[RMDB]
This 207-nucleotide RNA was probed chemically with 2A3.
As a SHAPE reagent, 2A3 marks flexible, mostly unpaired nucleotides at the ribose 2'-OH.
Reactivities are given for positions 27 through 156.
The RNA was probed in 150 mM KOAc, 10 mM MgCl2 and 150 mM bicine (pH 8.5) at 24 C.
RNA sequence: GGGAACGACUCGAGUAGAGUCGAAAACGCUGAUGUGGUCUUAGAGGCCUGCACAGACUUCUGGGACGGAGCUGACAUCUACCCUCUCUCGGGAUCUGACAGGUGGGUGAGGAAGCACAUGCCAGCAGCAAGAGCAGUCGCGCUGCCGGGGCACCUGGUUCUAUGUUGUCUUCGGACAACAUAGAACAAAAGAAACAACAACAACAAC
Reactivity to 2A3 in 0.01 (KOAc 150mM, MgCl2 10mM, bicine 150mM(pH8.5), 24C), signal-to-noise 1, nucleotides 027 to 156: c100g060c070u030g030a130u020g030u020g050g040u050c030u030u100a120g030a100g110g000c000c050u090g020c130a140c010a080g040a100c040u020u080c030u030g030g000g040a050c090g090g000a050g050c060u100g110a010c010a050u030c050u120a180c000c010c000u040c000u010c010u020c000g000g030g000a090u000c010u060g030a030c030a000g020g010u030g040g020g000u040g030a100g000g110a020a070g080c050a030c020a040u110g030c000c000a000g030c000a010g000c010a050a010g050a000g070c080a060g100u080c050g000c030g000c060u000g000c010c020g060g000g060g030c030a040c000c000u070g050